Structure probing data (2A3 and DMS) for a 207-nucleotide construct. The reactions ran in a buffer of 150 mM KOAc, 10 mM MgCl2 and 150 mM bicine (pH 8.5), at 24 C. For 2A3 the reverse transcriptase was SuperScript II with manganese.
RNA sequence: GGGAACGACUCGAGUAGAGUCGAAAAAUGAUCACCCCGUCCGAUGCGGAAGUUCGUGCUUCCGUCGAACGCGAAAGUCGGACGGCGGCCAUGAGUCGCGACGCAAAGCCGCGGCAAGUGGAGUUAGAAAAGCGUUUGAAGUUCGCUUCAAACGCAAGGAUCUUUAAUACUUCGGUAUUAAAGAUCCAAAAGAAACAACAACAACAAC
Reactivity to 2A3 in 0.01 (KOAc 150mM, MgCl2 10mM, bicine 150mM(pH8.5), 24C), signal-to-noise 3, nucleotides 027 to 156: a000u120g020a030u080c050a120c010c010c000c000g000u000c000c000g000a010u040g010c000g030g010a010a010g030u140u300c200g200u300g120c020u000u000c010c000g000u000c000g040a160a070c070g000c010g160a080a070a000g010u000c010g000g000a000c010g000g000c060g050g000c010c000a010u020g000a000g000u000c000g000c000g030a010c010g030c200a200a190a030g010c000c000g000c000g000g000c000a030a000g020u000g000g030a010g060u100u070a070g060a030a110a050a020g010c000g000u000u000u000g000a020a000g000u050u120c180g040c060u010u010c000a000a000a000c000g000c000a000a010
Reactivity to DMS in 0.01 (KOAc 150mM, MgCl2 10mM, bicine 150mM(pH8.5), 24C), signal-to-noise 1, nucleotides 027 to 156: a060u000g010a200u000c030a060c000c010c010c010g030u000c020c010g000a030u010g010c000g020g010a030a020g040u000u010c300g000u000g010c030u010u000c020c000g000u000c100g030a160a160c240g000c070g010a070a120a180g070u000c010g010g020a070c030g020g020c070g000g020c020c030a020u020g000a300g030u000c020g040c000g000a000c000g000c070a180a240a300g000c050c000g030c010g020g020c000a010a250g000u000g000g020a140g000u000u000a150g010a100a100a160a140g000c020g000u000u000u010g000a010a020g000u020u000c300g030c000u000u000c000a000a000a060c000g050c020a010a020
About this RNA
The DMS profile rests on 1,611 reads. The data come from the RNA Mapping Database (RMDB), library M2RFPK. For DMS the reverse transcriptase was MarathonRT.